[RMDB]
Source: RMDB library RFM100, as collected in RNAgym.
Structure probing data (2A3 and DMS) for a 177-nucleotide construct.
The DMS profile rests on 1,255 reads.
DMS adducts were read by reverse transcription with MarathonRT.
High 2A3 reactivity points to a flexible backbone, as in loops and unpaired stretches.
RNA sequence: GGGAACGACUCGAGUAGAGUCGAAAAAUACAGGGUAAGCGUAAGGGGCUACAUUGUGAAGGUUGGUGACCUACCGUGAUGAACUGAAAAAGAUUCAAAGUAGCGGUUUGAGCGAUGUGUAUAGACACACCUGUGAACGCUUCGGCGUUCACAGGUGAAAAGAAACAACAACAACAAC
Reactivity to 2A3 in 0.01 (KOAc 150mM, MgCl2 10mM, bicine 150mM(pH8.5), 24C), signal-to-noise 1, nucleotides 027 to 126: a000u160a000c040a000g000g000g100u000a110a020g100c000g000u110a000a000g000g000g080g000c070u080a070c000a130u230u000g010u040g100a110a000g000g000u010u000g120g000u160g080a000c000c000u000a000c000c000g000u000g000a080u110g000a100a040c000u030g120a000a000a000a100a000g060a110u050u000c000a110a120a120g020u000a010g000c160g070g000u000u070u160g140a050g000c000g000a000u080g000u000g000u030a040u070a300g090a000c000a000
Reactivity to DMS in 0.01 (KOAc 150mM, MgCl2 10mM, bicine 150mM(pH8.5), 24C), signal-to-noise 1, nucleotides 027 to 126: a020u010a080c000a040g030g000g010u010a010a120g010c130g040u060a020a030g000g040g010g000c010u030a020c040a010u010u030g020u040g000a060a030g010g000u060u090g020g000u000g010a050c100c010u000a080c000c000g030u000g000a130u000g000a000a000c000u000g010a110a080a210a070a120g000a130u020u000c020a060a000a290g000u040a190g010c020g000g000u000u000u000g000a050g030c030g000a030u020g000u000g030u010a080u020a080g000a070c190a130